[RMDB]
RNA sequence: GGGAACGACUCGAGUAGAGUCGAAAACGCUAUAGAUUCGUCUAUAGCGACUCCUACCCGCCGGCCGGUGCGCGCGCUAGGUGACGCAAACCACCGUGCGAAAUGUACUGGUUUUCGAACCAGUAAAAGAACCUAUAUGUUUCGACAUAUAGGUUCUAAAAGAAACAACAACAACAAC
Reactivity to 2A3 in 0.01 (KOAc 150mM, MgCl2 10mM, bicine 150mM(pH8.5), 24C), signal-to-noise 3, nucleotides 027 to 126: c000g000c000u000a000u010a010g010a020u030u040c160g030u000c120u010a000u000a000g000c000g000a000c000u000c010c000u020a110c040c030c010g000c010c010g030g000c050c220g010g010u010g000c020g010c000g010c010g050c100u160a110g080g260u040g080a110c010g000c020a030a030a020c010c000a010c000c010g040u120g000c000g010a070a020a030u160g000u010a000c000u000g000g010u010u020u020u040c070g010a000a010c000c000a000g000u020a010a020a000
Reactivity to DMS in 0.01 (KOAc 150mM, MgCl2 10mM, bicine 150mM(pH8.5), 24C), signal-to-noise 5, nucleotides 027 to 126: c010g010c000u000a000u010a010g000a020u000u020c190g020u000c000u010a000u000a000g000c000g010a030c130u000c010c010u000a120c140c110c010g010c050c020g000g010c030c070g020g010u000g010c300g000c070g000c040g000c080u000a100g010g010u000g010a090c020g010c040a050a260a070c110c010a130c030c010g010u010g010c000g000a040a070a070u010g010u000a010c000u000g010g010u000u000u010u020c150g010a030a010c000c000a010g000u000a010a030a130
Source information
This 177-nucleotide RNA was probed chemically with 2A3 and DMS. The 2A3 profile rests on 8,622 reads. The data come from the RNA Mapping Database (RMDB), library M2PK50.